[RMDB]
Chemical mapping of a 177-nucleotide RNA with 2A3 and DMS. DMS adducts were read by reverse transcription with MarathonRT.
RNA sequence: GGGAACGACUCGAGUAGAGUCGAAAAGCACUCCUUUUCGAAGGAGUGCCCAGGCGCGCGGCCUUUGUCCUGUCGCGUGUGCGCCGCGCGCGAUAUACGCCCAUCUGUGCAUAUUCGUAUGCACAAACCCACUAAAUGACUUCGGUCAUUUAGUGGGAAAAGAAACAACAACAACAAC
Reactivity to 2A3 in 0.01 (KOAc 150mM, MgCl2 10mM, bicine 150mM(pH8.5), 24C), signal-to-noise 2, nucleotides 027 to 126: g000c000a000c000u000c000c000u030u050u020u090c170g070a010a010g000g000a010g000u010g030c010c000c000a060g070g010c020g000c000g020c000g010g050c010c000u070u130u210g090u040c030c060u200g130u250c080g010c030g040u060g080u030g040c070g020c040c000g000c000g010c010g000c000g000a000u050a000u020a050c050g040c000c000c000a110u060c110u080g000u020g000c000a000u000a010u070u110c190g100u040a000u010g000c000a000c000a000a010a020
Reactivity to DMS in 0.01 (KOAc 150mM, MgCl2 10mM, bicine 150mM(pH8.5), 24C), signal-to-noise 2, nucleotides 027 to 126: g000c010a010c000u010c000c000u000u000u000u010c190g020a020a000g000g000a010g030u000g020c010c030c070a080g000g010c000g020c000g010c030g020g000c000c050u000u000u010g000u000c020c020u000g010u010c120g020c050g030u000g000u000g010c110g010c010c010g000c000g000c000g010c010g000a040u000a100u000a110c190g010c010c070c030a100u000c150u010g030u000g000c000a000u000a020u010u020c160g020u020a010u010g000c010a000c000a020a060a130

Conditions: 150 mM KOAc, 10 mM MgCl2 and 150 mM bicine (pH 8.5), 24 C.